[RMDB]
RNA sequence: GGGAACGACUCGAGUAGAGUCGAAAAACGGUCGUACGCGACCGAGGCGCGGCUAGGUCGACGGACCGAACAAUGGCAUCCCGCAUUCUGCCAUACGCCGCGCAGCUUCUUCUCAAACGGUGCGGAAAAAAGUAGGACACCUUCGGGUGUCCUACAAGUUUAUUCUGAGGUUCGCCUCAGAAUAAACAAAAGAAACAACAACAACAAC
Reactivity to DMS in 0.01 (KOAc 150mM, MgCl2 10mM, bicine 150mM(pH8.5), 24C), signal-to-noise 2, nucleotides 027 to 156: a050c030g000g020u000c000g050u000a110c200g000c000g000a030c000c020g000a000g030g050c070g030c060g010g080c000u010a100g000g070u020c010g030a260c300g010g010a020c000c010g030a080a010c300a130a070u000g010g000c000a140u010c050c000c000g010c000a080u010u000c060u000g000c000c000a040u010a050c110g020c000c000g010c000g040c010a010g000c010u010u000c040u000u000c050u000c040a160a110a080c070g010g030u000g000c000g030g010a000a070a080a100a070a140g010u000a000g040g000a000c010a030c000c010u000u000c290g050g050g040u000g000u000c000c000u010a000c000a010a040
Reactivity to 2A3 in 0.01 (KOAc 150mM, MgCl2 10mM, bicine 150mM(pH8.5), 24C), signal-to-noise 3, nucleotides 027 to 156: a010c000g010g000u000c000g010u040a030c290g000c010g140a000c000c000g000a050g000g000c000g000c000g010g000c010u010a000g000g000u000c030g120a150c210g160g040a000c000c000g000a020a010c040a000a020u010g000g000c010a020u100c040c030c000g000c000a020u300u120c010u040g000c000c010a010u010a080c060g010c000c010g010c000g000c000a000g010c010u140u070c000u050u010c030u010c030a080a080a070c050g030g000u000g000c000g000g000a090a000a040a020a050a000g000u000a000g000g000a000c000a000c020c010u050u060c190g070g000g000u010g000u000c000c010u000a000c000a000a000